[RMDB]
RNA sequence: GGGAACGACUCGAGUAGAGUCGAAAAUUGGCGAAUGCCUGUGGAUCUACAUUUGUUACGGGUUCGAGACCCGUCAGAGCCCGGCUCUGUAGCUCAAUGGUAGAGCGGUGUAUUCACAUAAACUUGUAAAAGACACGUGCCUUCGGGCACGUGUCAAGUUUGAGUAAUACUUCGGUAUUACUCAAACAAAAGAAACAACAACAACAAC
Reactivity to DMS in 0.01 (KOAc 150mM, MgCl2 10mM, bicine 150mM(pH8.5), 24C), signal-to-noise 2, nucleotides 027 to 156: u000u010g010g010c010g000a010a050u000g000c020c030u000g040u000g020g020a080u010c010u020a020c020a050u000u000u010g020u030u000a060c030g020g020g020u010u000c040g040a300g000a130c000c010c000g020u010c010a120g020a130g010c020c100c080g020g030c040u000c030u000g010u010a070g040c040u000c020a060a100u000g000g040u000a040g000a020g030c000g010g010u000g000u000a060u000u000c000a050c010a080u000a010a110a150c130u000u010g000u000a120a110a140a190g000a030c010a000c000g000u000g000c000c010u000u000c300g020g020g000c000a000c000g010u000g000u000c000a000a030
Reactivity to 2A3 in 0.01 (KOAc 150mM, MgCl2 10mM, bicine 150mM(pH8.5), 24C), signal-to-noise 2, nucleotides 027 to 156: u090u050g030g010c050g090a280a040u300g030c000c010u020g000u020g010g010a010u030c040u130a020c020a010u010u040u130g030u050u040a000c000g000g010g000u010u010c010g000a010g020a060c000c010c010g000u000c010a000g000a010g020c090c290c090g090g010c000u000c000u020g020u000a010g000c000u000c020a030a080u140g220g030u170a030g000a000g020c000g020g000u000g000u010a060u010u030c000a000c000a020u120a100a040a060c090u070u130g050u130a030a110a030a010g000a000c010a010c000g000u010g020c000c020u030u050c140g030g010g000c030a000c000g000u000g000u000c000a000a000